[RMDB]
RNA sequence: GGGAACGACUCGAGUAGAGUCGAAAAUCCCAAAGCGGAUUUAGCUCGGUUGGGAGAGUCCCAGACCGAAGAUCUGGCGGUCCUGUGUUCGAUCCACAGAAUUCGCACCAUAAACAACGGGAGAUUCCGUGAUCCUCCUAUUCGUAGGAGGAUCACGAAAAGAAACAACAACAACAAC
Reactivity to DMS in 0.01 (KOAc 150mM, MgCl2 10mM, bicine 150mM(pH8.5), 24C), signal-to-noise 1, nucleotides 027 to 126: u000c010c000c000a010a110a190g080c140g000g000a010u000u010u020a020g000c030u020c000g100g030u000u010g000g030g000a300g010a200g000u020c000c000c000a000g020a200c020c020g000a020a110g000a020u000c000u030g000g010c010g000g000u030c080c000u000g000u000g000u000u010c140g000a070u040c300c020a030c000a000g000a010a050u000u070c110g000c050a270c050c070a100u080a000a060a080c210a090a020c040g000g000g000a120g000a290u020u020c130
Reactivity to 2A3 in 0.01 (KOAc 150mM, MgCl2 10mM, bicine 150mM(pH8.5), 24C), signal-to-noise 3, nucleotides 027 to 126: u010c000c000c000a040a050a010g030c010g000g010a030u040u080u120a060g040c010u010c000g010g040u020u030g010g050g000a230g050a070g300u110c000c000c000a040g110a060c000c000g000a010a030g020a040u040c030u080g130g000c040g010g000u050c000c000u040g020u000g020u070u170c030g020a040u000c000c000a000c010a010g020a030a040u160u160c020g030c030a040c020c000a100u230a120a170a030c060a030a020c050g010g030g000a100g020a090u080u030c030
Record summary: This 177-nucleotide RNA was probed chemically with DMS and 2A3. For 2A3, 1,877 sequencing reads were counted. Conditions: 150 mM KOAc, 10 mM MgCl2 and 150 mM bicine (pH 8.5), 24 C.